The record gives the reactivity of an RNA of 177 nucleotides to 2A3 and DMS. The DMS profile rests on 7,979 reads. Reactivities are given for positions 27 through 126. DMS adducts were read by reverse transcription with MarathonRT.

[RMDB]
RNA sequence: GGGAACGACUCGAGUAGAGUCGAAAACAUCAAGGAGUUCUUGGUGCGGUCUUCUGAUACAUUCGACCAGAAGUUUGAGCCGGGCGAAACGAUCAAGCGACAAUGGAUCACCAUCAUGGACGGCAACCAUGUUCCUUAUGUUCGCAUAAGGAACAUGAAAAGAAACAACAACAACAAC
Reactivity to 2A3 in 0.01 (KOAc 150mM, MgCl2 10mM, bicine 150mM(pH8.5), 24C), signal-to-noise 6, nucleotides 027 to 126: c010a010u080c050a030a060g080g010a150g210u210u060c000u030u050g050g010u050g060c050g030g020u000c010u060u040c050u040g030a040u030a180c040a110u060u170c030g050a050c020c030a020g030a100a030g020u040u150u150g030a040g050c040c000g030g050g000c100g060a070a080a040c040g030a050u030c030a050a010g050c020g080a040c050a070a120u080g050g010a050u050c020a010c080c010a010u050c020a020u060g020g030a010c010g040g020c010a010a050c030
Reactivity to DMS in 0.01 (KOAc 150mM, MgCl2 10mM, bicine 150mM(pH8.5), 24C), signal-to-noise 7, nucleotides 027 to 126: c050a050u010c070a050a060g000g020a190g010u010u010c010u000u000g000g020u010g010c080g010g000u000c010u000u000c110u000g010a060u000a080c130a160u010u000c080g010a090c070c010a040g000a070a110g010u000u000u000g020a100g020c070c010g000g010g020c080g010a040a060a070c110g000a090u010c030a050a080g010c120g010a090c140a060a090u000g000g000a060u000c070a090c110c040a040u000c090a070u010g010g010a050c070g000g000c040a050a050c150